[RMDB]
RNA sequence: GGGAACGACUCGAGUAGAGUCGAAAAGAUAUGGACAGGAACAGGGAGUGUAGUGUCGGAAACGACACAAAACACGAGGAUCUGUCCUGUCCUAAGUCAAAAUCGAUCAGUGUUCGCACUGAUCGAACUAUCAGGAUCACUUCGGUGAUCCUGAUAGAAAAGAAACAACAACAACAAC
Reactivity to 2A3 in 0.01 (KOAc 150mM, MgCl2 10mM, bicine 150mM(pH8.5), 24C), signal-to-noise 2, nucleotides 027 to 126: g000a010u010a000u040g010g000a000c000a000g040g000a240a110c010a010g000g040g000a070g020u010g020u060a140g010u030g000u000c000g010g040a000a010a000c010g010a000c010a000c000a000a080a030a010c010a010c010g080a270g000g070a010u000c020u000g010u000c020c010u000g000u010c000c000u000a000a010g000u030c030a040a010a000a300u040c010g000a000u000c000a000g000u000g130u090u230c300g070c140a010c010u000g010a000u000c000g000a000a010
Reactivity to DMS in 0.01 (KOAc 150mM, MgCl2 10mM, bicine 150mM(pH8.5), 24C), signal-to-noise 2, nucleotides 027 to 126: g000a020u000a000u020g000g000a010c000a020g010g010a080a100c010a020g000g000g000a020g020u000g000u000a260g000u010g020u000c000g020g000a000a010a020c000g020a000c000a010c000a020a050a180a130c000a010c000g000a110g030g010a020u000c010u000g010u010c000c000u000g000u010c000c000u000a000a040g000u000c010a110a030a170a180u000c000g000a000u000c000a010g040u020g000u000u000c290g000c010a010c010u010g000a000u000c000g000a020a090